[RMDB]
RNA sequence: GGGAACGACUCGAGUAGAGUCGAAAACUAACCGAGCAAGCCGGGGUUAAACAACUGGUUGCCUGCAUUGACGAUAUUGUCGUUGGCCAUCUUUCUAUUCAGGUCACCCAACGUCCUCGCCGCAGCCCAUACGUAUCCUGUUCGCAGGAUACGUAUGAAAAGAAACAACAACAACAAC
Reactivity to 2A3 in 0.01 (KOAc 150mM, MgCl2 10mM, bicine 150mM(pH8.5), 24C), signal-to-noise 9, nucleotides 027 to 126: c010u010a030a020c010c020g020a020g060c030a100a020g040c020c000g030g000g000g020u070u130a120a170a040c060a030a050c040u050g030g010u040u050g030c000c020u040g010c020a090u050u150g030a040c030g050a060u060a130u180u230g040u040c030g030u040u050g040g020c020c010a060u030c050u030u160u030c050u070a140u050u110c040a020g010g030u030c020a040c010c010c000a030a020c040g040u030c010c010u020c020g020c010c020g020c010a020g030c010c030
Reactivity to DMS in 0.01 (KOAc 150mM, MgCl2 10mM, bicine 150mM(pH8.5), 24C), signal-to-noise 8, nucleotides 027 to 126: c060u010a080a100c070c030g010a080g010c050a080a070g010c020c020g020g000g000g010u000u010a070a100a090c200a080a090c100u010g000g000u010u010g000c030c030u000g020c050a080u020u020g000a050c110g000a100u020a090u020u010g010u000c030g020u010u010g020g000c060c070a070u020c040u010u010u020c070u000a070u020u020c090a070g010g000u010c060a090c050c000c020a060a120c100g000u010c010c010u000c030g010c020c060g020c050a080g000c030c060